[RMDB]
RNA sequence: GGGAACGACUCGAGUAGAGUCGAAAAUACUAGCAUUCGGUUCCAACCCUGGAUGGAUACUCAAAGGUUGGCUGAGUUCCUUCCUCCGGCCUUGGUUCCGAUGCUCCAUCCAACGCCGGAAACCAAACACUAUGCUGUGGUUCGCCACAGCAUAGUGAAAAGAAACAACAACAACAAC
Reactivity to 2A3 in 0.01 (KOAc 150mM, MgCl2 10mM, bicine 150mM(pH8.5), 24C), signal-to-noise 2, nucleotides 027 to 126: u170a040c090u050a000g000c000a030u050u240c010g010g000u020u000c020c000a010a040c020c000c010u010g000g000a030u040g000g020a050u110a200c010u000c010a100a120a060g280g010u160u090g170g040c050u000g020a020g000u020u020c000c000u000u000c000c020u020c000c020g010g000c030c030u030u030g010g000u020u000c000c000g000a000u000g010c000u000c000c010a040u010c000c010a080a100c160g010c090c090g000g040a050a030a060c050c050a070a130a010
Reactivity to DMS in 0.01 (KOAc 150mM, MgCl2 10mM, bicine 150mM(pH8.5), 24C), signal-to-noise 2, nucleotides 027 to 126: u000a080c070u000a020g020c000a020u000u000c010g030g020u010u000c010c030a030a090c140c070c060u010g000g000a020u000g000g000a020u000a020c030u000c030a020a080a130g010g020u000u020g010g000c110u000g010a020g020u000u000c020c030u000u000c050c010u000c130c120g040g000c110c130u010u000g000g010u000u000c010c010g020a010u000g020c010u000c100c060a070u010c030c010a070a100c110g010c100c030g000g030a040a080a070c100c080a090a040a210